An RNA of 177 nucleotides, treated with DMS and read out base by base. Reactivities are given for positions 27 through 126. Conditions: 150 mM KOAc, 10 mM MgCl2 and 150 mM bicine (pH 8.5), 24 C.
[RMDB]
RNA sequence: GGGAACGACUCGAGUAGAGUCGAAAAGAUAUGGAUUCCUGUUGGGAGUCUAGUAUCGGAAACGAUAUCAGACGAGGAUCAACUGCGUAGGAUAGAAUCCUAAGUCAAAGGCCCUGUUCGCAGGGCCCGUGGAUCUUAACUUCGGUUAAGAUCCACGAAAAGAAACAACAACAACAAC
Reactivity to DMS in 0.01 (KOAc 150mM, MgCl2 10mM, bicine 150mM(pH8.5), 24C), signal-to-noise 2, nucleotides 027 to 126: g000a040u000a030u020g020g000a050u000u000c010c060u000g010u000u000g010g010g010a050g010u000c010u010a060g010u000a000u000c000g010g010a040a010a070c010g010a000u000a000u010c100a020g000a010c000g000a120g020g000a110u000c000a020a010c000u010g010c260g030u000a120g000g010a240u020a110g000a020a150u000c010c010u010a000a170g000u000c020a100a170a180g000g000c000c000c000u000g000u000u020c260g030c020a010g000g020g030c000c000